[RMDB]
RNA sequence: GGGAACGACUCGAGUAGAGUCGAAAAGUGGUAAUAUUGGUUGUAAAAAGCACGCGGGAUUUGGCAUAGAUAAACCAUUGACAUGUAGUGAGCAUAAAUUACCCAAUUAUAUUGAUAUGACGCAUAAAAAAUGUUCUUCAUGUGGUAAAAAUGCAAAUCAAUGGCUUGUAUUCGUACAAGCCAUUGAAAAAGAAACAACAACAACAAC
Reactivity to DMS in 0.01 (KOAc 150mM, MgCl2 10mM, bicine 150mM(pH8.5), 24C), signal-to-noise 2, nucleotides 027 to 156: g030u000g000g010u000a050a050u000a060u010u010g020g050u020u000g030u020a060a000a150a110a140g000c000a040c100g020c050g000g030g000a130u000u000u020g030g020c030a120u000a100g020a110u000a050a060a000c000c030a080u000u000g010a150c180a060u010g030u000a130g030u000g000a090g030c010a050u000a060a120a100u030u000a110c010c010c020a080a080u000u010a080u020a120u000u000g000a110u010a090u000g000a080c090g030c040a080u070a010a000a040a050a110a080u000g000u000u010c090u000u000c050a030u010g030u010g010g010u000a050a000a040a040a060u000g010c030a050a110a170
Reactivity to 2A3 in 0.01 (KOAc 150mM, MgCl2 10mM, bicine 150mM(pH8.5), 24C), signal-to-noise 2, nucleotides 027 to 156: g010u010g040g060u050a040a070u070a150u190u190g030g050u010u090g000u070a030a110a020a020a060g010c030a030c020g080c060g000g030g000a060u040u040u090g050g000c000a050u060a050g040a030u120a090a100a010c050c040a050u050u080g080a050c010a070u110g000u040a050g050u020g100a020g000c010a010u060a050a190a000u060u030a010c000c000c000a010a040u170u050a080u020a050u090u130g030a000u040a040u170g010a020c030g030c080a010u160a050a110a040a000a020a040u040g030u070u000c000u060u020c020a010u100g050u080g120g030u060a000a030a040a060a000u070g020c040a020a050a070